[RMDB]
RNA sequence: GGGAACGACUCGAGUAGAGUCGAAAAUAGCUAAGAUUUAAUCAGAGCAUCCUACGUUCGGGAUAAUGAACGAUUCCCGCCUUGAGGGUCAGAAAGGCUAAACCUGUGAAUGAGCGGGGGGUCAAUACCCAAUUUGGACAGCAGUUCGACUCUGCUCCGUCUCUAUAAUCUUCGGAUUAUAGAGACGAAAAGAAACAACAACAACAAC
Reactivity to 2A3 in 0.01 (KOAc 150mM, MgCl2 10mM, bicine 150mM(pH8.5), 24C), signal-to-noise 4, nucleotides 027 to 156: u090a010g000c010u040a150a040g020a220u150u180u270a140a120u150c050a040g010a020g180c010a040u040c000c000u010a010c010g010u000u030c020g000g000g000a060u070a170a080u260g000a010a000c010g000a000u020u030c000c000c000g020c000c010u050u070g070a060g030g010g050u100c080a020g090a030a060a010g000g000c000u020a080a030a010c010c020u040g030u070g100a090a150u090g010a030g060c050g000g030g000g000g010g000u050c020a000a040u080a170c000c010c050a020a050u080u060u080g060g020a030c010a030g000c020a020g040u010u010c010g010a010c000u000c000u010g010c000u010c010
Reactivity to DMS in 0.01 (KOAc 150mM, MgCl2 10mM, bicine 150mM(pH8.5), 24C), signal-to-noise 1, nucleotides 027 to 156: u000a020g050c020u000a080a230g020a120u000u000u000a150a040u000c040a070g040a110g020c040a300u000c000c040u000a080c060g000u000u000c000g020g050g000a100u000a050a150u000g020a060a030c060g020a300u000u000c020c000c010g070c080c070u000u000g010a120g000g010g000u000c020a070g000a080a070a060g020g040c040u000a090a060a100c070c020u000g020u000g010a070a100u010g020a100g030c030g020g010g000g010g020g000u000c060a040a130u000a100c050c030c020a050a220u000u000u000g000g000a040c060a080g100c030a050g020u000u000c050g030a140c020u000c000u000g020c000u000c010